[RMDB]
RNA sequence: GGGAACGACUCGAGUAGAGUCGAAAAGAUAUGGAUCCAGUGGUUGAGCACUGGUCGGAAACGACCAAGUGCAAUGAUGCCACGGAUCCUAAGUCAAAAGGCUAGGUGCCUUCGGGCACCUAGCCAAGUGUAUUCAUUCGUUCGCGAAUGAAUACACAAAAGAAACAACAACAACAAC
Reactivity to DMS in 0.01 (KOAc 150mM, MgCl2 10mM, bicine 150mM(pH8.5), 24C), signal-to-noise 1, nucleotides 027 to 126: g000a030u000a050u000g010g000a010u010c000c010a190g090u010g000g010u000u000g010a090g010c000a010c000u010g000g010u000c010g040g000a000a010a050c010g000a000c000c000a040a040g020u000g000c010a140a090u010g000a200u000g000c000c010a010c000g000g000a010u000c010c000u000a000a040g000u000c000a160a130a180a140g000g000c010u000a020g010g020u000g000c000c010u000u020c180g040g000g040c000a010c000c000u000a000g020c010c000a000a030
Reactivity to 2A3 in 0.01 (KOAc 150mM, MgCl2 10mM, bicine 150mM(pH8.5), 24C), signal-to-noise 1, nucleotides 027 to 126: g020a000u020a000u080g000g000a020u030c020c100a120g020u020g100g120u150u300g300a030g030c010a020c010u010g000g000u000c000g000g030a010a000a000c000g020a020c010c030a140a040g000u000g000c020a020a030u180g010a050u120g040c010c000a000c000g010g000a000u000c010c000u000a020a010g000u000c020a000a060a090a270g000g020c040u010a000g020g000u000g010c000c000u040u100c220g000g010g000c010a000c000c000u000a000g010c000c010a000a000